Notes:
The data come from the RNA Mapping Database (RMDB), library OK1LIB. This 177-nucleotide RNA was probed chemically with DMS and 2A3. Conditions: 150 mM KOAc, 10 mM MgCl2 and 150 mM bicine (pH 8.5), 24 C.
[RMDB]
RNA sequence: GGGAACGACUCGAGUAGAGUCGAAAAAGUUCGCAAUAACCUCACGCACCAGAUUUCAUCAGUUAGGGAAAGAUGUCCUCGAACCAUCUACAAUGAUGAGAAGGAGGAUAAGGAACCUUCUCGGGAACAUAGUCGUGAGCUUCGGCUCACGACUAUGAAAAGAAACAACAACAACAAC
Reactivity to DMS in 0.01 (KOAc 150mM, MgCl2 10mM, bicine 150mM(pH8.5), 24C), signal-to-noise 1, nucleotides 027 to 126: a040g030u000u030c060g000c030a120a070u060a120a040c060c070u010c050a030c260g000c030a040c030c020a060g010a040u010u000u000c000a050u020c070a120g000u010u000a120g000g000g000a000a040a000g000a060u000g000u010c000c000u000c000g050a130a150c030c070a000u000c030u110a160c240a070a070u000g000a040u000g000a050g000a100a100g030g000a020g000g020a070u040a030a170g000g020a100a020c050c000u000u000c010u000c020g050g020g000a140a010
Reactivity to 2A3 in 0.01 (KOAc 150mM, MgCl2 10mM, bicine 150mM(pH8.5), 24C), signal-to-noise 3, nucleotides 027 to 126: a000g060u050u030c060g000c090a010a070u080a170a050c020c030u010c000a030c000g070c000a070c060c000a050g010a130u090u180u090c050a070u020c000a100g030u060u110a070g010g000g070a090a200a000g000a020u110g000u010c000c000u020c010g020a110a060c020c000a000u000c000u090a080c060a150a090u300g030a040u010g010a010g050a110a000g140g000a000g050g000a000u070a110a070g150g000a010a020c000c000u050u000c000u020c000g040g000g060a090a000